[RMDB]
RNA sequence: GGGAACGACUCGAGUAGAGUCGAAAAUGAAGGCCAUCAAAACUGUAGUCCUUGUGGCUACCGUUCAUGACAACCCCUCCAGACAGACACCCACUUACUGGUGGAAAUAUGGGAAGUAUGUGGAGCCGUAUCUAGACGUCUUCGGACGUCUAGAUACAAAAGAAACAACAACAACAAC
Reactivity to DMS in 0.01 (KOAc 150mM, MgCl2 10mM, bicine 150mM(pH8.5), 24C), signal-to-noise 2, nucleotides 027 to 126: u000g000a120a120g040g040c010c030a050u000c080a180a070a030a030c050u000g000u000a000g010u010c000c010u020u000g030u020g010g010c010u000a010c000c060g010u000u000c140a050u000g050a030c080a100a140c080c010c000c020u000c010c000a080g000a150c150a140g000a110c170a050c070c000c070a090c080u000u000a050c060u000g010g020u000g030g000a120a080a080u000a120u030g020g020g010a060a020g020u010a020u000g000u000g000g020a140g040c070c090
Reactivity to 2A3 in 0.01 (KOAc 150mM, MgCl2 10mM, bicine 150mM(pH8.5), 24C), signal-to-noise 1, nucleotides 027 to 126: u110g030a020a020g090g030c040c030a070u040c000a040a150a000a000c010u000g010u010a020g030u030c020c000u110u260g140u260g100g000c000u010a010c010c000g020u010u060c020a110u090g130a030c020a070a240c050c010c000c020u000c030c010a000g020a010c030a010g040a060c000a050c020c000c000a060c030u000u070a040c000u060g000g000u030g010g160a030a130a050u190a070u040g040g000g040a020a020g030u060a030u090g070u030g010g020a000g090c020c040